[RMDB]
RNA sequence: GGGAACGACUCGAGUAGAGUCGAAAAAUACUUUCAAAGCGCCAGCUCAAGGAGCUGGUCCUCUACUCGCCGCAACACGUCGCGCGGCUGGAAAAGGCAGGCCAAUUCCCCAAGCGGGUACAGCUGGCCCAGCAAUGAUCUUCGGAUCAUUGCUGGGAAAAGAAACAACAACAACAAC
Reactivity to 2A3 in 0.01 (KOAc 150mM, MgCl2 10mM, bicine 150mM(pH8.5), 24C), signal-to-noise 2, nucleotides 027 to 126: a000u120a010c060u000u070u070c020a110a020a000g060c040g000c010c000a010g000c010u020c090a160a140g140g050a010g150c000u000g030g000u010c000c010u000c000u000a000c000u010c030g010c010c000g000c020a090a100c120a030c070g180u130c030g110c060g020c030g030g000c010u000g000g070a000a140a040a090g040g000c000a050g020g000c010c000a020a070u110u070c000c020c000c000a090a040g090c120g020g010g010u040a020c040a000g000c000u050g000g040
Reactivity to DMS in 0.01 (KOAc 150mM, MgCl2 10mM, bicine 150mM(pH8.5), 24C), signal-to-noise 1, nucleotides 027 to 126: a060u000a110c060u040u000u010c120a060a080a080g000c130g010c000c000a000g000c000u000c070a300a100g060g000a040g000c000u000g000g030u000c040c000u000c000u000a050c000u060c090g050c060c080g000c010a000a160c200a140c060g000u080c040g030c300g000c000g020g000c010u000g000g000a000a130a270a170g000g030c150a230g000g000c000c000a230a270u000u000c000c000c000c080a040a140g000c020g000g000g000u000a000c290a090g040c030u010g030g000
Structure probing data (2A3 and DMS) for a 177-nucleotide construct. The DMS profile rests on 1,015 reads. Conditions: 150 mM KOAc, 10 mM MgCl2 and 150 mM bicine (pH 8.5), 24 C. The data come from the RNA Mapping Database (RMDB), library RFM100.